[RMDB]
RNA sequence: GGGAACGACUCGAGUAGAGUCGAAAAGAUUCCUCGUUGUUGAGCGAGGUUUAAACAAAUCGACCACACAAACGUAGAGCCGACUACGUAUUUAUAAAUUAAGGCAUUAAGUGUGAUAAGGAGACAAAAAACGAUGUUGUGUUCGCACAACAUCGAACCAUACUGGUUUCUUCGGAAACCAGUAUGGAAAAGAAACAACAACAACAAC
Reactivity to 2A3 in 0.01 (KOAc 150mM, MgCl2 10mM, bicine 150mM(pH8.5), 24C), signal-to-noise 5, nucleotides 027 to 156: g090a090u180u130c000c000u000c000g000u010u030g000u010u020g010a000g010c010g000a010g000g010u050u090u040a010a010a010c050a000a010a000u000c000g010a010c010c010a020c000a000c010a020a270a000c000g000u000a000g000a010g020c010c000g080a020c000u000a000c010g030u010a040u000u160u040a110u060a030a040a000u110u100a000a000g000g000c000a000u070u130a110a050g000u010g000u010g020a020u030a080a080g140g010a070g050a070c150a060a140a020a020a020a010c010g000a000u000g000u000u000g000u000g000u040u060c150g050c080a000c000a000a010c000a010u000c000g000a000a000
Reactivity to DMS in 0.01 (KOAc 150mM, MgCl2 10mM, bicine 150mM(pH8.5), 24C), signal-to-noise 3, nucleotides 027 to 156: g000a300u000u010c000c000u000c080g010u000u010g030u000u010g010a160g040c040g010a070g010g010u010u030u000a040a060a100c080a070a110a080u010c030g010a040c000c010a050c010a100c020a150a120a070c010g000u000a010g010a190g030c030c040g060a160c020u010a000c030g000u000a210u000u000u000a070u010a050a030a040u000u000a040a080g020g000c020a290u010u000a040a260g020u000g010u000g010a080u000a100a130g000g020a130g010a090c040a010a040a060a090a040a200c030g000a020u000g010u000u010g010u010g010u000u010c290g040c010a020c000a000a030c000a000u000c000g000a000a050